[RMDB]
An RNA of 177 nucleotides, treated with 2A3 and DMS and read out base by base. Values cover nucleotides 27 to 126. For DMS the reverse transcriptase was MarathonRT. Conditions: 150 mM KOAc, 10 mM MgCl2 and 150 mM bicine (pH 8.5), 24 C.
RNA sequence: GGGAACGACUCGAGUAGAGUCGAAAAAGUCUGGGCCUAGGAGAAUAAAACCACAAAAUAUAGGGUCGUGCCUUCAAGCUCCACUGUCUACCCUGAGGACCUGACUCUCUUUGCUACCAGCCCAGUGGUACACUCAACAUUUCGAUGUUGAGUGUACAAAAGAAACAACAACAACAAC
Reactivity to 2A3 in 0.01 (KOAc 150mM, MgCl2 10mM, bicine 150mM(pH8.5), 24C), signal-to-noise 3, nucleotides 027 to 126: a000g080u000c000u000g010g020g030c010c020u060a080g040g040a060g030a090a060u140a140a120a050a040c040c030a040c070a060a170a120a060u300a060u150a090g030g000g000u020c020g010u040g030c010c000u050u130c060a040a050g000c000u010c040c020a040c090u060g050u010c060u040a080c010c000c000u050g000a060g010g000a040c030c040u060g010a040c010u000c000u060c030u030u100u050g040c030u030a130c010c010a010g010c000c000c010a000g030u030g040
Reactivity to DMS in 0.01 (KOAc 150mM, MgCl2 10mM, bicine 150mM(pH8.5), 24C), signal-to-noise 4, nucleotides 027 to 126: a120g000u000c010u000g000g000g020c040c050u000a080g020g010a110g000a120a110u000a050a080a100a130c080c090a140c130a070a050a080a100u020a120u010a120g010g000g000u000c040g010u000g000c010c030u010u000c080a050a080g000c060u000c020c020a050c120u010g010u000c060u000a110c060c010c030u000g000a090g030g000a030c050c030u000g010a040c040u000c020u000c070u010u020u000g010c090u000a090c040c040a150g000c010c000c010a040g010u000g010